[RMDB]
Structure probing data (2A3 and DMS) for a 177-nucleotide construct.
Values cover nucleotides 27 to 126.
2A3 is a SHAPE reagent: it acylates the 2'-hydroxyl of flexible nucleotides of all four kinds.
The RNA was probed in 150 mM KOAc, 10 mM MgCl2 and 150 mM bicine (pH 8.5) at 24 C.
Source: RMDB library OK2TRN, as collected in RNAgym.
2A3 adducts were read by reverse transcription with SuperScript II with manganese.

RNA sequence: GGGAACGACUCGAGUAGAGUCGAAAAUCAAUCUGGGCGUCCAAAACUCUCAGACGGAGUUCGUCGACGCGGCAGACGAGCACGACGCCGACGCCGUGCUCGUCUCCUCGCUGUACGGGCACGCCAACCACCCAGUAUCAUUCGUGAUACUGGGUGGAAAAGAAACAACAACAACAAC
Reactivity to 2A3 in 0.01 (KOAc 150mM, MgCl2 10mM, bicine 150mM(pH8.5), 24C), signal-to-noise 2, nucleotides 027 to 126: u060c000a000a050u020c060u080g030g010g030c000g020u050c060c030a040a060a050a050c020u020c010u030c050a030g060a170c050g010g010a110g010u010u060c030g020u000c010g000a000c010g010c000g010g000c010a000g000a020c020g010a000g000c000a000c020g080a010c030g150c220c160g250a120c100g000c000c020g010u010g000c020u000c000g000u000c000u000c000c000u030c000g000c020u030g060u160a030c010g010g000g020c080a010c040g000c030c000a020a060
Reactivity to DMS in 0.01 (KOAc 150mM, MgCl2 10mM, bicine 150mM(pH8.5), 24C), signal-to-noise 3, nucleotides 027 to 126: u010c080a090a160u000c060u010g020g000g020c080g010u000c070c180a110a110a100a060c020u010c000u010c040a090g020a080c140g010g030a090g000u000u000c000g010u000c010g010a030c000g000c100g010g010c260a020g020a010c010g000a020g000c000a000c000g010a010c070g000c280c280g000a090c040g030c000c000g050u000g000c000u000c010g020u000c000u000c020c010u000c010g000c010u000g010u010a010c000g030g010g010c060a070c030g000c030c060a150a210